Chemical mapping of a 177-nucleotide RNA with DMS and 2A3. The RNA was probed in 150 mM KOAc, 10 mM MgCl2 and 150 mM bicine (pH 8.5) at 24 C. Reactivities are given for positions 27 through 126. The 2A3 profile rests on 3,137 reads. For DMS, 1,501 sequencing reads were counted. Source: RMDB library RFMREP, as collected in RNAgym.
RNA sequence: GGGAACGACUCGAGUAGAGUCGAAAAACGAGUAAGACGCCGACCCAUCAGUUUUAUCGUACGGUAAGGGCGUACGAUGGCUUUAACGGGUACGGGGGAUCAGGGUUUGAUUCCGGAGAGGGAGCCUCCCAUAUAGCAAGUUCGCUUGCUAUAUGGGAAAAGAAACAACAACAACAAC
Reactivity to DMS in 0.01 (KOAc 150mM, MgCl2 10mM, bicine 150mM(pH8.5), 24C), signal-to-noise 2, nucleotides 027 to 126: a090c050g010a130g020u010a080a070g000a230c120g010c020c010g000a150c000c010c000a150u000c200a020g000u010u010u020u010a020u000c000g020u000a010c000g020g030u010a090a090g020g000g010c000g000u000a010c000g000a000u000g000g010c030u000u000u000a070a060c120g000g010g010u010a040c040g010g000g000g010g000a100u000c070a110g000g000g000u020u000u000g010a150u000u000c030c060g050g000a080g000a120g000g000g010a090g000c140c070u000
Reactivity to 2A3 in 0.01 (KOAc 150mM, MgCl2 10mM, bicine 150mM(pH8.5), 24C), signal-to-noise 3, nucleotides 027 to 126: a010c030g010a040g080u150a140a020g140a060c070g050c110c020g050a020c010c010c010a040u100c040a010g020u040u010u090u210a010u010c010g000u000a000c000g000g070u060a070a100g130g100g020c010g000u000a000c000g000a010u030g020g000c000u060u070u090a100a060c090g010g020g000u110a130c010g010g000g000g020g000a050u080c060a020g010g090g010u060u130u090g100a090u180u050c020c050g010g000a100g030a030g040g010g000a010g030c020c020u020